[RMDB]
RNA sequence: GGGAACGACUCGAGUAGAGUCGAAAACGGUCGAAAUUCGUUUCGACCGAAUAUGCUAGCUGAGCACAGCUGCAAUGCUAAGCUGAUAGCCAGCUGCAAGCGCGAGUUCGGCGUUCGCGCCGAACAAGCACCUACCACUAUUCGUAGUGGUAGGUGCAAAAGAAACAACAACAACAAC
Reactivity to DMS in 0.01 (KOAc 150mM, MgCl2 10mM, bicine 150mM(pH8.5), 24C), signal-to-noise 4, nucleotides 027 to 126: c020g000g000u000c000g030a000a010a030u000u000c220g010u000u000u000c000g000a000c000c000g040a030a010u010a080u000g000c020u000a030g010c000u010g000a120g010c010a110c010a010g020c000u000g010c090a140a120u000g020c090u000a090a040g000c010u000g010a090u010a140g010c020c000a000g010c000u000g000c050a060a100g020c140g010c170g000a160g010u000u000c010g000g000c000g000u000u010c200g020c010g000c000c000g000a000a000c010a070a150
Reactivity to 2A3 in 0.01 (KOAc 150mM, MgCl2 10mM, bicine 150mM(pH8.5), 24C), signal-to-noise 5, nucleotides 027 to 126: c010g000g010u000c000g000a000a000a020u150u110c190g060u030u000u000c000g000a000c000c000g000a000a020u120a030u030g020c070u100a020g000c000u000g030a020g040c000a010c000a050g000c010u050g000c090a130a210u210g030c050u100a060a030g000c000u000g020a120u100a070g000c000c000a000g000c010u010g000c020a040a040g090c070g010c030g070a130g070u000u000c000g020g000c020g040u030u060c190g000c020g000c060c000g000a000a000c010a010a010
Chemical mapping of a 177-nucleotide RNA with DMS and 2A3. Values cover nucleotides 27 to 126. The RNA was probed in 150 mM KOAc, 10 mM MgCl2 and 150 mM bicine (pH 8.5) at 24 C. 2A3 adducts were read by reverse transcription with SuperScript II with manganese. For DMS, 4,261 sequencing reads were counted. For DMS the reverse transcriptase was MarathonRT.